[RMDB]
The data come from the RNA Mapping Database (RMDB), library M2PK50.
An RNA of 177 nucleotides, treated with DMS and 2A3 and read out base by base.
For 2A3, 11,567 sequencing reads were counted.
The reactions ran in a buffer of 150 mM KOAc, 10 mM MgCl2 and 150 mM bicine (pH 8.5), at 24 C.
For DMS the reverse transcriptase was MarathonRT.

RNA sequence: GGGAACGACUCGAGUAGAGUCGAAAAGCACUGGCGUUCGCGCCAGUGCAAAGAACGCGACGGCCACCGAUAUAAAACGGUGAAGAACGCGACAAGCCGUAAAAACGUCGAACUUCGGUUCGACGAAGACUUCUAAUAAGUUCGCUUAUUAGAAGUCAAAAGAAACAACAACAACAAC
Reactivity to DMS in 0.01 (KOAc 150mM, MgCl2 10mM, bicine 150mM(pH8.5), 24C), signal-to-noise 4, nucleotides 027 to 126: g010c010a000c000u010g010g000c000g040u000u010c240g020c000g040c000c000a000g020u010g010c000a020a050a100g000a160a110c050g030c030g010a080c060g010g020c080c010a020c000c000g000a130u010a140u010a090a100a140a130c010g000g010u000g010a090a090g000a120a070c070g000c010g000a080c110a090a120g000c010c010g020u010a100a040a050a070a100c010g000u000c010g000a010a000c000u000u030c130g030g020u000u000c000g000a010c000g010a040a030
Reactivity to 2A3 in 0.01 (KOAc 150mM, MgCl2 10mM, bicine 150mM(pH8.5), 24C), signal-to-noise 5, nucleotides 027 to 126: g000c000a000c000u000g000g000c020g040u060u090c220g030c010g020c110c020a000g010u010g010c000a000a010a000g010a060a010c010g000c030g100a040c020g040g010c010c000a000c000c010g020a010u030a000u080a300a140a010a030c010g010g020u070g000a020a010g050a070a040c040g010c010g040a040c080a040a000g010c010c010g030u070a070a030a000a040a030c020g000u000c010g000a010a000c000u040u060c180g080g000u010u010c000g010a000c000g000a000a010